[RMDB]
RNA sequence: GGGAACGACUCGAGUAGAGUCGAAAAGAAAGAAAGAAAGAAUGGGAGUGGUAAUGAUGAUCUGGUUGGACAAGAGUCUCUGAGCUUUUCUCUGAGGAUCUUUGAACCCACCUGAUCCACCUUCAAAGUUCAUGAUAUUAUUCGUAAUAUCAUGAACAAAAGAAACAACAACAACAAC
Reactivity to DMS in 0.01 (KOAc 150mM, MgCl2 10mM, bicine 150mM(pH8.5), 24C), signal-to-noise 9, nucleotides 027 to 126: g010a060a060a070g000a070a050a060g010a060a060a050g000a060a080u010g000g000g000a060g020u000g010g010u010a060a070u020g010a120u020g000a020u000c010u000g000g010u010u000g020g010a120c050a020a020g000a020g010u000c000u000c000u000g000a020g010c300u010u020u020u030c010u000c000u010g010a030g000g000a010u000c000u010u010u030g010a070a080c090c000c040a030c010c010u000g000a010u000c020c100a050c080c040u000u010c080a060a060a160
Reactivity to 2A3 in 0.01 (KOAc 150mM, MgCl2 10mM, bicine 150mM(pH8.5), 24C), signal-to-noise 8, nucleotides 027 to 126: g060a000a060a000g060a020a070a010g050a030a070a000g050a040a030u110g030g020g010a040g030u070g020g030u100a110a090u120g100a070u060g000a000u000c020u030g010g010u020u020g000g010a010c010a020a010g000a010g050u000c010u000c020u050g020a020g050c090u200u190u260u170c010u000c000u010g010a010g010g000a020u000c000u060u050u090g060a090a090c000c000c000a000c000c010u000g000a000u000c010c000a020c000c010u080u100c060a120a090a020
An RNA of 177 nucleotides, treated with DMS and 2A3 and read out base by base.
2A3 adducts were read by reverse transcription with SuperScript II with manganese.
Source: RMDB libraries RFM100 and RFMREP, as collected in RNAgym.